[RMDB]
RNA sequence: GGGAACGACUCGAGUAGAGUCGAAAAAUCAAUCCAGCCCCUGUGAGUUACUGUAUGGAUGUACAGUACAUCCAGUGACAACAAAGAUCAACCCUAUUUUCGGAAAGAGCCUCGCAAAUUUUGUCGAAGCUCAUGAUUUAUUCGUAAAUCAUGAGCUAAAAGAAACAACAACAACAAC
Reactivity to 2A3 in 0.01 (KOAc 150mM, MgCl2 10mM, bicine 150mM(pH8.5), 24C), signal-to-noise 2, nucleotides 027 to 126: a000u030c010a010a000u040c050c020a050g120c040c030c000c000u060g040u060g080a130g010u050u050a000c020u010g000u090a050u070g030g140a070u170g000u020a050c040a090g030u020a010c000a050u000c000c010a020g000u000g050a020c060a090a020c020a060a150a000g030a060u040c030a050a070c010c000c010u050a090u100u070u040u080c000g050g030a030a060a040g040a050g010c000c000u040c010g010c050a170a220a170u180u230u110u120g090u070c020g040a020
Reactivity to DMS in 0.01 (KOAc 150mM, MgCl2 10mM, bicine 150mM(pH8.5), 24C), signal-to-noise 4, nucleotides 027 to 126: a060u020c070a070a110u010c040c030a100g010c030c020c000c010u000g000u010g000a100g010u000u010a010c010u010g000u010a050u000g000g010a050u010g010u000a060c130a110g020u000a050c030a050u000c010c010a030g000u000g010a020c020a090a070c110a050a070a110g000a060u000c090a050a130c030c030c020u010a110u000u000u000u000c060g010g000a060a070a140g010a070g010c050c030u000c050g000c080a060a090a150u010u000u010u000g000u000c090g010a130
An RNA of 177 nucleotides, treated with 2A3 and DMS and read out base by base. High 2A3 reactivity points to a flexible backbone, as in loops and unpaired stretches. DMS adducts were read by reverse transcription with MarathonRT. 2A3 adducts were read by reverse transcription with SuperScript II with manganese. It was measured as part of the RMDB library OK2TRN.